Source information: Source: RMDB library OK2TRN, as collected in RNAgym. The record gives the reactivity of an RNA of 177 nucleotides to 2A3 and DMS. The RNA was probed in 150 mM KOAc, 10 mM MgCl2 and 150 mM bicine (pH 8.5) at 24 C. For 2A3, 1,436 sequencing reads were counted. Reactivities are given for positions 27 through 126. High DMS reactivity at an A or C suggests that its Watson-Crick edge is free.
RNA sequence: GGGAACGACUCGAGUAGAGUCGAAAAUCGAUUCGAUCGCGUAUCAAUCGCUCGACGUGCUCAAGGCCAUGGAGGCCGAUUCGGGCAUCCGCAUCGGCGAGCUGCGCGUGGACGGCGGCGCGAGCGAAGGCACGAUUUACUUCGGUAAAUCGUGCCUAAAAGAAACAACAACAACAAC
Reactivity to 2A3 in 0.01 (KOAc 150mM, MgCl2 10mM, bicine 150mM(pH8.5), 24C), signal-to-noise 1, nucleotides 027 to 126: u090c010g000a020u100u000c020g050a070u070c010g030c010g050u030a060u140c040a100a050u030c000g040c050u020c030g180a150c030g010u030g020c040u060c160a040a150g080g000c010c020a020u130g230g050a060g000g080c020c000g000a010u020u080c030g000g020g050c120a110u080c010c000g000c040a010u050c020g000g000c030g010a060g030c000u110g060c090g020c040g020u030g020g000a010c050g010g030c030g000g000c000g010c000g000a000g000c000g000a010
Reactivity to DMS in 0.01 (KOAc 150mM, MgCl2 10mM, bicine 150mM(pH8.5), 24C), signal-to-noise 2, nucleotides 027 to 126: u010c040g010a180u000u010c000g000a140u000c020g010c000g010u000a120u000c120a120a140u030c040g020c030u000c010g000a060c020g020u000g000c000u000c060a180a270g000g000c000c050a100u000g000g000a110g040g030c000c000g010a050u000u000c050g000g060g000c240a040u010c010c060g020c150a070u000c060g000g020c000g000a130g020c150u000g010c080g040c000g040u000g000g000a070c040g000g020c170g000g000c060g010c000g000a020g000c000g010a030